[RMDB]
Source: RMDB library OK1LIB, as collected in RNAgym. This 177-nucleotide RNA was probed chemically with 2A3 and DMS. The 2A3 profile rests on 576 reads.

RNA sequence: GGGAACGACUCGAGUAGAGUCGAAAAACCGCAGAGACCUUCAACAAGUCUGCGAAUCAAACGAGCACUCCGAGGAUUGCAGAUCUUGAUUUGUGAAUGGGAUGACUCGGACCUCGUUCGCUGCGUCUAACAUCGAGCCGUUCGCGGCUCGAUGUUAAAAAGAAACAACAACAACAAC
Reactivity to 2A3 in 0.01 (KOAc 150mM, MgCl2 10mM, bicine 150mM(pH8.5), 24C), signal-to-noise 1, nucleotides 027 to 126: a030c040c000g000c000a070g000a020g000a060c000c000u000u000c040a010a000c000a000a100g050u000c000u030g000c030g030a000a000u180c110a000a050a000c040g060a000g050c090a060c070u000c000c000g030a000g000g080a020u170u160g030c010a080g040a140u080c040u060u160g170a300u070u120u060g240u130g050a150a030u210g020g000g100a030u020g060a030c000u000c000g000g000a060c000c000u000c000g010u000u000c000g000c000u000g000c010g060u060c040
Reactivity to DMS in 0.01 (KOAc 150mM, MgCl2 10mM, bicine 150mM(pH8.5), 24C), signal-to-noise 1, nucleotides 027 to 126: a020c090c000g020c000a070g000a140g000a000c060c000u010u000c300a110a080c300a100a160g000u000c000u000g000c000g010a030a040u010c080a000a150a030c030g040a020g000c130a070c300u060c000c060g000a040g000g000a120u000u000g010c000a020g000a050u000c130u050u000g000a180u000u040u120g000u000g000a090a090u000g020g000g000a120u080g000a290c010u000c010g000g000a000c140c000u000c020g000u010u000c300g000c030u040g000c020g010u000c010
Conditions: 150 mM KOAc, 10 mM MgCl2 and 150 mM bicine (pH 8.5), 24 C.